RNA sequence: GGGAACGACUCGAGUAGAGUCGAAAAUUGCCGAUUUCGAUCGGCAAAAUUGAGGGUUGGUGGUCUAGUCAGGCUAUGACACCUCCUUGACAUGGAGGAGGUCGGCGGUUCAAAUCCGCCCCAACCCACCACUUGGAGUUGGUGUUCGCACCAACAACGCUCCUAUAUUAUUCGUAAUAUAGGAGCGAAAAGAAACAACAACAACAAC
Reactivity to 2A3 in 0.01 (KOAc 150mM, MgCl2 10mM, bicine 150mM(pH8.5), 24C), signal-to-noise 4, nucleotides 027 to 156: u030u010g000c010c030g010a000u040u070u130c190g070a030u020c000g010g000c010a000a010a020a010u070u070g050a090g000g000g010u000u000g000g000u020g020g010u010c000u010a030g030u060c050a030g060g050c060u190a030u120g010a000c000a010c000c000u010c010c000u050u110g100a100c070a130u170g030g000a010g000g000a010g000g020u040c020g000g010c000g010g000u020u010c010a010a020a020u000c000c000g000c000c000c000c000a000a000c020c000c000a010c000c000a010c010u060u140g120g040a130g040u010u000g000g000u020g030u060u110c200g020c090a000c010c000a000a010c010a030a010
Reactivity to DMS in 0.01 (KOAc 150mM, MgCl2 10mM, bicine 150mM(pH8.5), 24C), signal-to-noise 2, nucleotides 027 to 156: u000u000g000c000c000g030a000u000u010u010c190g020a020u010c010g010g020c010a000a000a030a070u000u000g000a110g030g030g080u000u000g000g030u010g000g000u000c040u010a070g040u020c110a150g010g060c020u010a030u000g010a130c050a100c020c000u000c010c010u000u010g020a220c220a120u000g000g020a050g000g000a110g000g020u000c040g000g010c010g050g030u000u020c120a100a300a130u000c000c000g010c010c000c020c010a010a040c020c010c000a060c000c030a050c090u000u000g000g000a210g000u000u000g010g020u010g000u000u010c100g000c070a080c020c010a020a020c000a050a300